Overview:
The data come from the RNA Mapping Database (RMDB), library RNAMAK. Chemical mapping of a 207-nucleotide RNA with 2A3 and DMS. High 2A3 reactivity points to a flexible backbone, as in loops and unpaired stretches.
RNA sequence: GGGAACGACUCGAGUAGAGUCGAAAAAGAACAUUCGUGUUCUAGAUUGGGGUCGAUGAGGUCACAUCCCAACAACAGCUUACUGAAGCCUCCACGGUAAGACAUGUAGGGAUUAAGCUCAUCGACGGAGGCACCCGGCCUAUACAUUCGUGUAUAAUGACAUAAUAAUCUUCGGAUUAUUAUGUCAAAAAGAAACAACAACAACAAC
Reactivity to 2A3 in 0.01 (KOAc 150mM, MgCl2 10mM, bicine 150mM(pH8.5), 24C), signal-to-noise 5, nucleotides 027 to 156: a000g010a000a000c020a020u110u140c230g080u100g000u020u010c010u020a070g030a210u110u290g050g000g020g020u000c010g000a000u000g000a010g020g070u160c100a020c030a060u010c000c000c000a020a060c050a020a000c010a040g050c000u010u000a000c000u020g090a180a030g040c010c000u030c030c020a040c020g010g000u010a010a010g100a090c060a170u130g050u090a120g020g000g000a000u050u060a070a030g050c000u000c000a000u000c000g000a000c010g000g010a000g010g000c000a020c010c010c000g060g010c030c020u050a040u020a040c030a030u070u200c150g090u120g040u100a010u160a070a200
Reactivity to DMS in 0.01 (KOAc 150mM, MgCl2 10mM, bicine 150mM(pH8.5), 24C), signal-to-noise 3, nucleotides 027 to 156: a040g000a050a040c000a070u000u000c280g010u000g010u000u000c010u000a080g000a220u000u000g010g010g030g010u000c010g010a010u000g020a050g010g020u010c070a100c160a110u000c000c000c000a090a200c050a080a160c070a140g010c010u000u000a040c010u000g000a060a130g020c040c020u000c000c030a300c020g010g010u010a010a020g000a030c060a170u000g030u000a190g040g030g000a050u000u000a080a130g000c000u000c010a030u000c010g020a030c020g010g010a030g020g010c030a120c030c000c010g020g000c020c020u000a060u000a020c030a170u000u000c160g030u000g030u000a050u000a120a230